[RMDB]
RNA sequence: GGGAACGACUCGAGUAGAGUCGAAAAGUUCAGUCGUUCGCGACUGAACAAACUGUGAAGCGCGAAAAGACAGAAAACAAACGGCAACGCGCGUAUCGCCGAAAACCCUGCAGUUCGCUGCAGGGAACACUUAAUUAGUGUUCGCACUAAUUAAGUGAAAAGAAACAACAACAACAAC
Reactivity to 2A3 in 0.01 (KOAc 150mM, MgCl2 10mM, bicine 150mM(pH8.5), 24C), signal-to-noise 9, nucleotides 027 to 126: g000u000u010c000a000g000u000c010g020u030u070c210g000c010g100a010c010u010g010a000a000c000a000a010a000c020u040g020u030g120a070a020g020c010g000c020g080a120a090a060a020g130a040c070a060g150a050a140a030a020c080a040a120a020c020g020g000c030a040a030c020g010c010g000c010g030u050a070u150c060g010c010c000g040a060a050a070a090c000c000c000u000g000c000a010g000u020u100c200g020c080u000g000c010a000g000g000g000a000a000
Reactivity to DMS in 0.01 (KOAc 150mM, MgCl2 10mM, bicine 150mM(pH8.5), 24C), signal-to-noise 9, nucleotides 027 to 126: g010u000u000c000a010g020u000c000g040u010u010c240g040c000g010a020c000u000g000a010a010c000a030a050a110c070u000g010u000g010a110a200g010c010g010c000g010a070a070a090a120g010a090c100a060g000a100a070a090a100c140a070a060a110c050g010g010c130a090a100c040g000c020g000c020g010u000a060u000c090g010c010c060g000a080a070a080a120c010c000c000u000g000c000a010g010u000u010c170g010c010u000g000c000a020g000g000g000a020a020
An RNA of 177 nucleotides, treated with 2A3 and DMS and read out base by base.
The RNA was probed in 150 mM KOAc, 10 mM MgCl2 and 150 mM bicine (pH 8.5) at 24 C.
The DMS profile rests on 17,826 reads.
It was measured as part of the RMDB library M2PK50.
DMS adducts were read by reverse transcription with MarathonRT.
Values are in units of 0.01, from 0 to 300, in steps of 10.